[RMDB]
Chemical mapping of a 177-nucleotide RNA with DMS. Values cover nucleotides 27 to 126. Conditions: 150 mM KOAc, 10 mM MgCl2 and 150 mM bicine (pH 8.5), 24 C. DMS adducts were read by reverse transcription with MarathonRT. Source: RMDB library OK2TRN, as collected in RNAgym.
RNA sequence: GGGAACGACUCGAGUAGAGUCGAAAAAGGUGAGAAUAGGAAUUAGAAGGAAGUGAGGCGACAGGCAGUUGUGACUCAGUGGGCCACCGAAAAUCAACUGCAUGGAGAUUUUAUCUGGGGGUGAAGCCUAAGGUUUGAUCUUCGGAUCAAACCUUAGAAAAGAAACAACAACAACAAC
Reactivity to DMS in 0.01 (KOAc 150mM, MgCl2 10mM, bicine 150mM(pH8.5), 24C), signal-to-noise 2, nucleotides 027 to 126: a060g030g010u010g000a090g010a080a080u000a090g010g010a090a060u010u000a060g000a080a050g000g010a050a080g000u010g000a070g000g010c080g020a150c070a040g010g000c030a020g000u000u010g010u000g000a300c150u000c030a040g020u000g000g020g030c130c040a070c030c100g010a020a010a070a070u010c020a010a040c040u010g000c050a050u000g010g000a110g010a050u000u000u000u000a050u010c070u000g050g020g000g000g010u000g000a040a100g010c170